[RMDB]
RNA sequence: GGGAACGACUCGAGUAGAGUCGAAAACAUCCGGGUCGGAUUGUACGCAAGAGAGCGGGAACGGGUGCGCAUAGGCCAGACCGGCUUCGGUGAUCUUGGGAAUCAAAUCUUUGCCAAAGUCGUGGCAGGAUAAAUGAUCAUUCGUGAUCAUUUAUCCAAAAGAAACAACAACAACAAC
Reactivity to 2A3 in 0.01 (KOAc 150mM, MgCl2 10mM, bicine 150mM(pH8.5), 24C), signal-to-noise 6, nucleotides 027 to 126: c020a050u020c010c010g030g000g070u060c040g030g000a020u040u090g050u120a040c050g000c100a040a030g090a020g010a020g120c060g020g020g000a050a030c030g020g000g010u070g020c070g000c040a100u140a150g160g000c010c010a030g060a120c020c020g000g000c000u060u050c030g060g030u030g020a030u000c020u050u060g030g000g100a070a060u090c030a030a060a080u020c030u070u070u080g000c000c000a070a070a030g090u090c040g060u070g030g000c030a020
Reactivity to DMS in 0.01 (KOAc 150mM, MgCl2 10mM, bicine 150mM(pH8.5), 24C), signal-to-noise 8, nucleotides 027 to 126: c100a090u010c030c010g010g000g030u000c070g010g010a090u000u010g020u000a100c080g010c040a080a090g000a080g000a210g020c030g010g000g000a070a080c070g010g000g010u010g000c110g010c070a130u000a090g010g020c020c030a090g010a140c160c020g000g010c070u000u000c030g010g020u000g000a060u000c030u000u000g000g000g010a120a110u000c080a030a050a070u010c030u000u000u000g000c010c010a050a060a070g010u010c080g010u000g010g010c050a110